[RMDB]
RNA sequence: GGGAACGACUCGAGUAGAGUCGAAAAGUCGCCUCCUUCGGGAGGCGACAAAUACAGAGACUACGCAACUCUGAAAAACACAACAAAAGUGUAAAAGCGUAGAAACAUCCACGUUCGCGUGGAUGAAUCCAAGAAGGAACUUCGGUUCCUUCUUGGAAAAAGAAACAACAACAACAAC
Reactivity to DMS in 0.01 (KOAc 150mM, MgCl2 10mM, bicine 150mM(pH8.5), 24C), signal-to-noise 1, nucleotides 027 to 126: g020u000c000g030c000c000u010c000c010u000u000c220g020g000g020a000g000g020c010g000a000c050a000a050a060u000a300c050a010g020a000g000a170c010u000a000c000g040c000a090a030c000u000c000u000g010a090a090a030a200a020c020a000c010a010a190c110a070a020a110a240g000u000g010u000a050a060a060a100g000c000g050u000a010g000a300a080a160c000a000u000c000c000a000c010g010u000u000c200g010c040g060u000g000g000a000u000g000a090a130
Chemical mapping of a 177-nucleotide RNA with DMS. Reactivities are given for positions 27 through 126. It was measured as part of the RMDB library M2PK50. For DMS, 807 sequencing reads were counted. DMS (dimethyl sulfate) methylates the pairing face of unpaired adenines and cytosines. The RNA was probed in 150 mM KOAc, 10 mM MgCl2 and 150 mM bicine (pH 8.5) at 24 C. For DMS the reverse transcriptase was MarathonRT.